Overview:
An RNA of 207 nucleotides, treated with 2A3 and DMS and read out base by base. The DMS profile rests on 1,251 reads. For 2A3 the reverse transcriptase was SuperScript II with manganese. It was measured as part of the RMDB library OK3TST. The RNA was probed in 150 mM KOAc, 10 mM MgCl2 and 150 mM bicine (pH 8.5) at 24 C.
[RMDB]
RNA sequence: GGGAACGACUCGAGUAGAGUCGAAAACAUGGUGGCAAGUACGUCGCGAUAUUGCUCCACCUGCAAUAGAAGCGUAGACAUCAACUGUAGCGAGAGCUACUCAACUUAUGGACCUUAGAGCAAGCGAAGACGACAGGUCCUGUCGGAAUUCGCUAGAGCUAUACCUAGGCUUCGGCCUAGGUAUAGCAAAAGAAACAACAACAACAAC
Reactivity to 2A3 in 0.01 (KOAc 150mM, MgCl2 10mM, bicine 150mM(pH8.5), 24C), signal-to-noise 2, nucleotides 027 to 156: c090a040u160g000g010u050g060g000c120a100a070g110u040a070c110g040u010c000g030c010g090a080u040a060u040u010g000c010u040c030c000a120c080c100u070g000c000a000a000u020a050g110a140a040g020c000g010u060a020g020a130c010a020u070c020a020a130c110u080g010u020a000g010c010g010a040g010a000g020c010u010a000c030u020c040a060a150c010u100u080a020u140g010g040a040c010c000u040u060a010g020a030g120c030a080a000g010c030g020a010a000g010a020c000g000a000c000a010g140g160u120c100c030u000g000u000c010g020g030a180a180u000u000c000g000c000u030a050g000a000
Reactivity to DMS in 0.01 (KOAc 150mM, MgCl2 10mM, bicine 150mM(pH8.5), 24C), signal-to-noise 1, nucleotides 027 to 156: c020a060u010g010g020u000g030g010c070a080a180g050u000a050c060g000u020c050g000c040g040a240u020a000u030u000g000c020u000c040c240a140c110c080u030g070c030a090a030u000a040g000a100a260g060c000g050u030a100g010a090c050a170u000c000a000a040c010u010g010u020a030g000c060g000a230g000a300g060c030u000a050c000u000c070a080a210c090u000u000a190u010g000g020a070c000c000u030u000a180g050a030g020c020a060a040g080c020g000a150a010g000a140c060g000a030c030a020g080g010u000c030c160u010g020u000c010g000g020a040a230u000u000c000g000c030u000a080g000a300